[RMDB]
RNA sequence: GGGAACGACUCGAGUAGAGUCGAAAACGCAGGGGCAGAUCCUGCUGGCCAACCGCAAGGCACGCGACCUGUUCGGCGGCGAGCUGCGCGGCGCCGAACUGCGCCAGCGCCUGGCCGAACUCGGCCAGGUCGAUACCCCGUUCGCGGGGUAUCGACCAAAAGAAACAACAACAACAAC
Reactivity to DMS in 0.01 (KOAc 150mM, MgCl2 10mM, bicine 150mM(pH8.5), 24C), signal-to-noise 3, nucleotides 027 to 126: c120g000c030a020g000g000g010g040c170a100g010a090u000c040c040u000g000c040u010g000g010c020c020a120a140c060c100g000c070a090a140g020g010c040a100c100g020c030g000a060c020c030u000g010u010u000c080g010g010c020g020g010c030g000a090g020c090u000g020c150g020c000g010g010c010g000c030c050g000a100a050c020u000g000c090g010c020c010a120g010c020g000c020c030u010g000g020c000c010g010a130a110c230u020c080g020g020c000c010a060
Reactivity to 2A3 in 0.01 (KOAc 150mM, MgCl2 10mM, bicine 150mM(pH8.5), 24C), signal-to-noise 1, nucleotides 027 to 126: c050g000c000a010g000g000g030g000c020a010g000a060u030c010c010u040g060c000u000g010g000c010c010a090a070c030c020g020c070a010a060g070g020c040a010c090g070c010g040a130c010c030u090g070u070u070c040g000g000c000g030g060c030g020a040g040c120u150g020c090g000c010g080g000c000g000c000c020g020a020a010c010u020g000c040g060c000c020a030g020c000g030c080c020u020g020g000c020c010g040a220a120c090u080c160g010g010c020c010a010